Structure probing data (DMS and 2A3) for a 207-nucleotide construct.
It was measured as part of the RMDB library OK3TST.
For DMS, 9,033 sequencing reads were counted.
For DMS the reverse transcriptase was MarathonRT.
The reactions ran in a buffer of 150 mM KOAc, 10 mM MgCl2 and 150 mM bicine (pH 8.5), at 24 C.
[RMDB]
RNA sequence: GGGAACGACUCGAGUAGAGUCGAAAACAGUAGAGAGCCAUGGAUGGUGUGUAGUAACAUGGUAGUAUUCAAAUGUUGGAAAUACUGCUUUGAGGUGAAAGGAACAGUGAUUCGAGAGAAGGAAUAGAAUAAACAAAGGUGAGGUAUCAUAGUUUAACCAUAUAGGUAUAUUCGUAUACCUAUAUGGAAAAGAAACAACAACAACAAC
Reactivity to DMS in 0.01 (KOAc 150mM, MgCl2 10mM, bicine 150mM(pH8.5), 24C), signal-to-noise 4, nucleotides 027 to 156: c040a110g040u000a120g020a140g010a160g030c030c050a080u000g020g020a090u010g010g020u000g040u010g040u000a090g030u000a060a130c050a060u000g020g020u000a030g000u000a020u000u000c030a070a090a100u000g020u000u000g000g010a080a050a060u000a030c020u010g010c020u010u000u010g010a100g020g020u010g010a050a070a110g020g020a060a030c050a090g030u000g010a200u000u000c060g000a110g010a050g010a050a050g010g010a050a090u010a090g010a070a080u010a060a050a080c060a040a070a100g010g020u000g010a070g040g010u000a060u000c050a110u000a110g000u000u000u000a070a260
Reactivity to 2A3 in 0.01 (KOAc 150mM, MgCl2 10mM, bicine 150mM(pH8.5), 24C), signal-to-noise 6, nucleotides 027 to 156: c020a010g020u150a030g030a010g000a010g030c040c030a050u060g030g020a030u050g010g050u030g020u030g010u040a050g020u030a060a040c040a050u060g020g010u040a020g010u020a040u040u050c060a050a090a120u200g050u110u050g040g020a000a030a040u040a020c020u020g030c000u040u030u070g030a030g000g040u050g020a060a040a010g020g000a040a010c020a050g030u020g050a060u060u090c040g030a020g000a000g010a070a020g010g010a020a010u050a060g040a030a040u130a140a060a020c070a030a070a000g030g010u030g020a020g020g020u050a030u120c030a050u060a070g010u050u050u030a050a040